[RMDB]
RNA sequence: GGGAACGACUCGAGUAGAGUCGAAAAGGAAGCGAUUAUCGAAAGCGCCGUCACUCUUCAUGAUGAAGGAAUUGACGUUCACCCAGAAAUCAUGAUUCCGCUCAUCGCUACGAAAAGUGAACUAAGACAGUUUUACGGUAUUCGUACCGUAAAACUGAAAAGAAACAACAACAACAAC
Reactivity to DMS in 0.01 (KOAc 150mM, MgCl2 10mM, bicine 150mM(pH8.5), 24C), signal-to-noise 4, nucleotides 027 to 126: g020g010a150a080g010c040g010a060u010u000a260u020c050g010a060a070a150g000c030g030c160c080g000u000c000a020c020u000c030u000u000c020a110u000g010a040u000g010a030a150g010g020a010a020u000u000g000a090c210g000u000u000c040a130c060c050c090a180g010a040a050a050u010c080a110u020g000a060u000u000c020c000g010c220u000c040a040u000c040g010c260u010a040c170g000a020a000a020a010g010u000g000a030a090c100u000a100a090g000a200
Reactivity to 2A3 in 0.01 (KOAc 150mM, MgCl2 10mM, bicine 150mM(pH8.5), 24C), signal-to-noise 3, nucleotides 027 to 126: g040g040a070a050g020c040g030a050u060u120a090u300c070g090a110a050a090g000c020g000c000c010g000u010c020a010c010u050c000u010u030c020a060u210g050a010u030g000a020a000g000g010a020a040u030u040g070a050c110g030u050u030c040a070c050c030c010a020g070a010a060a010u080c040a030u230g060a050u020u030c020c020g050c140u000c010a030u010c000g000c050u100a050c070g040a000a020a000a000g030u030g010a040a000c020u040a060a030g100a070

Structure probing data (DMS and 2A3) for a 177-nucleotide construct. The RNA was probed in 150 mM KOAc, 10 mM MgCl2 and 150 mM bicine (pH 8.5) at 24 C. It was measured as part of the RMDB library OK2TST. For DMS the reverse transcriptase was MarathonRT.